[RMDB]
RNA sequence: GGGAACGACUCGAGUAGAGUCGAAAACGUUUCGGUCGCCGACGCGCAUCGCAAGGCUCACGAAUGCGAUCCGCUGAGCGCCUACGGCGGGGUCAUCGCCGCCAAUACCGAGGUCAGUGUCGAAAUGGACUACAGUAUGAUUCGUCAUACUGUAGUCAAAAGAAACAACAACAACAAC
Reactivity to 2A3 in 0.01 (KOAc 150mM, MgCl2 10mM, bicine 150mM(pH8.5), 24C), signal-to-noise 9, nucleotides 027 to 126: c020g000u030u050u040c030g010g030u080c040g010c030c020g030a040c050g010c000g000c010a020u010c010g000c030a040a050g180g010c120u120c080a120c090g120a120a050u060g000c010g000a010u040c060c000g000c020u030g030a030g040c030g020c020c010u060a070c070g000g010c020g010g010g020g010u110c070a120u180c120g100c070c000g000c010c010a020a030u120a060c030c030g020a010g000g050u080c060a060g030u030g060u210c030g050a040a040a090u140g080
Reactivity to DMS in 0.01 (KOAc 150mM, MgCl2 10mM, bicine 150mM(pH8.5), 24C), signal-to-noise 9, nucleotides 027 to 126: c100g010u000u000u000c030g010g010u000c040g030c020c030g000a150c220g010c030g030c300a030u000c020g010c020a050a140g010g010c080u000c150a080c120g010a100a170u010g010c010g000a020u000c180c010g000c020u000g000a160g010c030g000c050c030u000a070c130g010g010c010g010g000g010g010u010c180a110u010c080g010c010c010g010c010c020a090a120u000a060c080c040g010a050g000g000u010c060a080g010u000g010u000c030g010a050a070a070u010g010